[RMDB]
RNA sequence: GGGAACGACUCGAGUAGAGUCGAAAAAGACUUGUCCGGGUGUCUACUGAGAGAGUAGAACUUGCAGUAGAGAGACACCUUUCGAAUGGCGAGAGGUGGCAUCUACUGCUGGUGCGACAGUCACCUAUCAAGUCAUGCGGUUCGCUGCAUGGCUUGAAAAAGAAACAACAACAACAAC
Reactivity to DMS in 0.01 (KOAc 150mM, MgCl2 10mM, bicine 150mM(pH8.5), 24C), signal-to-noise 9, nucleotides 027 to 126: a080g000a030c010u010u030g030u000c020c020g010g010g020u010g010u000c000u000a010c000u000g000a230g010a140g010a040g010u000a010g000a050a050c010u010u000g000c000a000g000u000a000g000a010g000a140g010a070c000a000c000c000u000u000u000c000g010a300a130u050g020g020c030g010a020g000a000g010g020u000g000g000c020a120u000c000u000a010c000u000g000c000u000g000g010u010g010c110g010a030c060a030g000u000c010a120c000c000u010a120
Reactivity to 2A3 in 0.01 (KOAc 150mM, MgCl2 10mM, bicine 150mM(pH8.5), 24C), signal-to-noise 9, nucleotides 027 to 126: a000g030a020c050u140u180g000u010c020c020g090g050g090u160g070u020c010u010a010c010u060g050a060g020a030g010a000g210u010a000g000a020a010c010u030u050g000c000a000g000u000a000g000a000g010a010g010a020c000a000c000c000u000u010u000c060g060a250a200u250g260g110c040g000a010g000a000g000g000u000g010g010c020a030u000c000u000a000c000u000g000c000u000g010g040u130g030c070g010a000c000a010g010u020c000a020c010c000u060a090
This 177-nucleotide RNA was probed chemically with DMS and 2A3.
2A3 adducts were read by reverse transcription with SuperScript II with manganese.
The DMS profile rests on 87,934 reads.
Conditions: 150 mM KOAc, 10 mM MgCl2 and 150 mM bicine (pH 8.5), 24 C.